Conditions: 150 mM KOAc, 10 mM MgCl2 and 150 mM bicine (pH 8.5), 24 C. Chemical mapping of a 177-nucleotide RNA with DMS and 2A3. The DMS profile rests on 5,745 reads. Values cover nucleotides 27 to 126. DMS adducts were read by reverse transcription with MarathonRT.
RNA sequence: GGGAACGACUCGAGUAGAGUCGAAAAGGUGGCUCGCUCACGUGAGAAUUAAGAGACGACUCCGAGUCACCGAUUUAGCAUGUUCGUCCUAGAGGGGCACCCAGCAAGAAAUAGGACGUUCAUGCGAGGGAUGCAGUUGCUUCGGCAAUUGCAUCCCAAAAGAAACAACAACAACAAC
Reactivity to DMS in 0.01 (KOAc 150mM, MgCl2 10mM, bicine 150mM(pH8.5), 24C), signal-to-noise 3, nucleotides 027 to 126: g000g040u020g010g000c010u000c000g000c040u000c060a190c180g020u060g010a090g030a150a120u010u060a120a060g000a090g000a120c110g010a160c010u000c100c000g000a010g040u000c000a000c000c000g020a050u030u030u000a110g000c000a000u000g010u000u000c000g000u000c000c000u000a030g000a110g000g030g030g010c030a090c050c020c020a140g000c070a090a130g010a070a100a160u010a000g000g000a000c010g030u000u000c000a000u000g000c000g000a060
Reactivity to 2A3 in 0.01 (KOAc 150mM, MgCl2 10mM, bicine 150mM(pH8.5), 24C), signal-to-noise 9, nucleotides 027 to 126: g010g000u000g010g000c000u000c010g020c000u080c030a120c120g110u290g050a090g070a090a210u300u210a160a040g040a010g010a060c070g080a090c040u020c040c010g000a000g010u000c000a000c010c000g000a000u030u010u080a030g000c000a000u000g000u000u000c000g000u010c010c000u000a010g020a050g050g020g050g090c050a200c030c030c010a040g060c100a140a050g080a120a090a040u020a000g000g000a010c000g000u000u000c000a000u000g000c000g000a060